[RMDB]
The record gives the reactivity of an RNA of 177 nucleotides to 2A3 and DMS. DMS (dimethyl sulfate) methylates the pairing face of unpaired adenines and cytosines. As a SHAPE reagent, 2A3 marks flexible, mostly unpaired nucleotides at the ribose 2'-OH. The DMS profile rests on 1,690 reads. The reactions ran in a buffer of 150 mM KOAc, 10 mM MgCl2 and 150 mM bicine (pH 8.5), at 24 C. For DMS the reverse transcriptase was MarathonRT. It was measured as part of the RMDB library OK1LIB. 2A3 adducts were read by reverse transcription with SuperScript II with manganese.
RNA sequence: GGGAACGACUCGAGUAGAGUCGAAAAAAACGAAUUUAAAGACUAUAUUAUAGACGUAGUAUACGCAGAAGGAUUGGGAGCUAAUAGAAAUGAACUAUUAGUACGUGGUUCUGAAGAAAAUGAAGACGAUCUAUCCAGCAUUCGUGCUGGAUAGAUCAAAAGAAACAACAACAACAAC
Reactivity to 2A3 in 0.01 (KOAc 150mM, MgCl2 10mM, bicine 150mM(pH8.5), 24C), signal-to-noise 2, nucleotides 027 to 126: a000a010a000c020g040a080a030u260u140u300a090a000a000g010a000c000u000a000u000a060u180u200a110u190a270g080a120c070g010u000a000g020u060a000u060a040c040g000c000a000g000a040a000g100g020a030u010u010g110g000g120a000g000c000u000a000a000u000a000g220a050a160a040u230g000a050a010c000u000a000u000u110a000g010u040a040c180g020u140g030g030u290u190c010u090g000a080a170g000a000a090a000a300u120g000a050a000g040a000c070
Reactivity to DMS in 0.01 (KOAc 150mM, MgCl2 10mM, bicine 150mM(pH8.5), 24C), signal-to-noise 2, nucleotides 027 to 126: a080a030a080c100g000a050a030u030u000u000a070a110a200g000a100c050u030a060u080a030u010u020a110u070a020g060a260c070g020u000a020g050u000a060u000a030c060g000c030a060g040a290a020g000g000a060u000u000g000g030g000a300g010c040u000a010a000u000a000g010a130a090a130u010g020a170a060c000u000a040u000u000a010g000u000a100c050g000u020g000g030u000u000c000u000g000a220a130g010a130a020a000a040u040g000a150a150g020a070c200